[RMDB]
RNA sequence: GGGAACGACUCGAGUAGAGUCGAAAACUUUGAUGUUCCCCAGCCAGGGAUUUUCAUCCUCGAGCUUCUUAAUUUUCUUCUUGGCCUUCCGGAGCUCCCUCUCGAGUUCCUCCGCCCUUUUUCUUCCACCACGACAAGUUCGCUUGUCGUAAAAGAAACAACAACAACAAC
Reactivity to 2A3 in 0.01 (KOAc 150mM, MgCl2 10mM, bicine 150mM(pH8.5), 24C), signal-to-noise 9, nucleotides 027 to 129: c030u110u080u260g110a100u160g030u030u020c010c000c000c000a000g020c010c010a020g020g020g020a040u090u050u090u210c070a040u040c000c010u030c050g050a050g000c020u080u040c030u080u270a230a240u090u080u050u030c030u070u010c020u030u040g040g020c010c000u060u030c030c010g020g000a020g020c020u020c020c010c000u040c010u020c020g020a020g000u020u030c000c000u020c000c000g040c000c000c010u040u030u010u010u010c010u040u000c030c020a080c030c010
Reactivity to DMS in 0.01 (KOAc 150mM, MgCl2 10mM, bicine 150mM(pH8.5), 24C), signal-to-noise 7, nucleotides 027 to 129: c040u000u020u050g050a110u060g020u000u000c020c000c000c130a050g000c050c050a120g030g000g050a040u010u040u070u070c090a090u030c030c040u030c050g000a170g060c040u020u040c110u030u040a080a070u030u000u020u010c000u030u020c080u000u030g040g020c050c060u030u000c070c030g040g000a140g010c060u010c030c030c010u040c000u000c050g020a090g020u000u000c030c020u010c000c030g020c020c020c020u000u040u030u000u010c050u030u000c030c020a080c110c090
Structure probing data (2A3 and DMS) for a 170-nucleotide construct. For DMS, 43,735 sequencing reads were counted. For DMS the reverse transcriptase was MarathonRT. For 2A3 the reverse transcriptase was SuperScript II with manganese.